This 177-nucleotide RNA was probed chemically with 2A3 and DMS.
[RMDB]
RNA sequence: GGGAACGACUCGAGUAGAGUCGAAAAGUAGCCGGCUUCAUACAAACGCUGAGCCAUCAUCAUGGUCUUCUUUACCCCAAAGCCUAAUCGGGUACUGGCAGAUUGCUGUAACGUUGAGGUAAUAAAGCGUAUAUGGGACAUUCGUGUCCCAUAUACGAAAAGAAACAACAACAACAAC
Reactivity to 2A3 in 0.01 (KOAc 150mM, MgCl2 10mM, bicine 150mM(pH8.5), 24C), signal-to-noise 4, nucleotides 027 to 126: g070u060a020g040c040c020g030g050c010u150u090c090a010u060a180c060a050a210a030c090g010c110u060g020a010g040c030c000a040u070c000a010u040c020a040u130g050g000u050c020u060u020c000u030u090u190a160c030c000c010c010a050a040a010g010c030c010u020a040a040u060c020g090g060g040u040a040c040u040g070g030c020a030g050a300u160u260g030c020u010g030u010a020a010c010g020u030u040g080a010g050g030u060a100a070u130a120a190a010g060
Reactivity to DMS in 0.01 (KOAc 150mM, MgCl2 10mM, bicine 150mM(pH8.5), 24C), signal-to-noise 5, nucleotides 027 to 126: g020u000a100g020c040c030g010g020c020u000u020c060a080u010a120c190a090a100a120c210g020c050u000g010a100g030c010c010a060u000c120a060u000c100a070u000g010g000u000c030u000u000c040u000u000u000a170c080c010c020c070a080a120a140g010c020c020u000a050a040u000c060g000g000g010u000a020c060u000g010g000c050a120g020a120u010u000g010c000u010g000u010a030a070c060g000u000u000g000a060g010g000u000a060a060u010a040a100a100g010
The reactions ran in a buffer of 150 mM KOAc, 10 mM MgCl2 and 150 mM bicine (pH 8.5), at 24 C. 2A3 is a SHAPE reagent: it acylates the 2'-hydroxyl of flexible nucleotides of all four kinds. 2A3 adducts were read by reverse transcription with SuperScript II with manganese. It was measured as part of the RMDB library OK2TST.